RNA sequence: GGGAACGACUCGAGUAGAGUCGAAAAAUCACUAUCUCUUCUGCCAUCCCGAUUCGCCGGAUGAGUUCGAGAUCACAACGAAUUUCCCGAAGCGCGUGCUCUUCUCGAAAGCGAACUUGGAUGCCGCCAUCCGCUAGAUGUUCGCAUCUAGCGGAUGAAAAGAAACAACAACAACAAC
Reactivity to 2A3 in 0.01 (KOAc 150mM, MgCl2 10mM, bicine 150mM(pH8.5), 24C), signal-to-noise 2, nucleotides 027 to 126: a000u060c030a020c060u090a120u100c040u020c000u180u040c030u050g040c020c000a010u020c040c000c000g060a130u050u060c020g000c040c000g100g010a060u120g020a100g050u110u160c070g020a020g030a070u120c060a040c010a080a140c070g040a080a140u000u040u090c000c010c000g010a070a010g060c070g010c020g020u040g000c000u000c000u040u000c010u000c000g050a080a020a020g020c020g000a010a030c030u040u050g030g010a030u030g060c030c020g030c030
Reactivity to DMS in 0.01 (KOAc 150mM, MgCl2 10mM, bicine 150mM(pH8.5), 24C), signal-to-noise 3, nucleotides 027 to 126: a110u000c080a110c130u000a060u000c040u000c050u000u000c060u000g020c070c020a040u000c040c010c030g000a140u000u000c060g050c000c080g010g000a150u020g000a060g030u020u000c180g000a030g000a050u020c070a040c090a110a080c080g010a100a080u010u000u000c010c010c000g020a110a080g000c040g030c140g000u000g010c030u010c030u010u000c030u000c030g000a070a150a150g010c010g000a020a020c060u000u000g000g000a080u000g000c080c060g020c120